[RMDB]
RNA sequence: GGGAACGACUCGAGUAGAGUCGAAAACUCUCGGAUGCACUUAAACGACAGAUUCGCAUUGCAUGCCGUAAGUGUAAUUUAGCUUUCCGGUUAACCACCUCAAAGCUACGCGCUAAUGAUAAUAUCUAUACUAGCGGCUUCGGCCGCUAGAAAAGAAACAACAACAACAAC
Reactivity to 2A3 in 0.01 (KOAc 150mM, MgCl2 10mM, bicine 150mM(pH8.5), 24C), signal-to-noise 4, nucleotides 027 to 129: c020u020c000u000c000g020g010a000u010g000c010a000c050u110u120a120a120a000c030g060a020c060a040g120a250u150u040c000g030c010a090u060u130g010c020a000u100g110c010c030g010u060a030a000g000u000g020u000a060a260u070u080u070a000g050c000u010u000u000c010c000g000g000u000u020a050a000c020c030a030c010c010u030c030a010a020a020g000c020u090a060c060g050c000g050c030u020a120a000u130g120a010u040a110a060u070a140u070c000u000a080u020a170
Reactivity to DMS in 0.01 (KOAc 150mM, MgCl2 10mM, bicine 150mM(pH8.5), 24C), signal-to-noise 4, nucleotides 027 to 129: c090u000c000u020c050g060g010a090u020g040c000a010c180u070u000a010a070a230c070g030a090c000a060g060a300u010u010c120g050c080a000u000u030g080c030a040u050g010c000c010g000u040a070a000g030u040g010u070a010a210u060u010u030a020g010c020u000u000u030c130c160g000g000u060u010a080a150c300c150a080c010c000u000c300a000a000a060g050c000u010a110c300g010c040g010c070u020a040a030u050g040a050u020a000a000u050a260u010c070u000a100u010a030

An RNA of 170 nucleotides, treated with 2A3 and DMS and read out base by base. The RNA was probed in 150 mM KOAc, 10 mM MgCl2 and 150 mM bicine (pH 8.5) at 24 C. 2A3 adducts were read by reverse transcription with SuperScript II with manganese.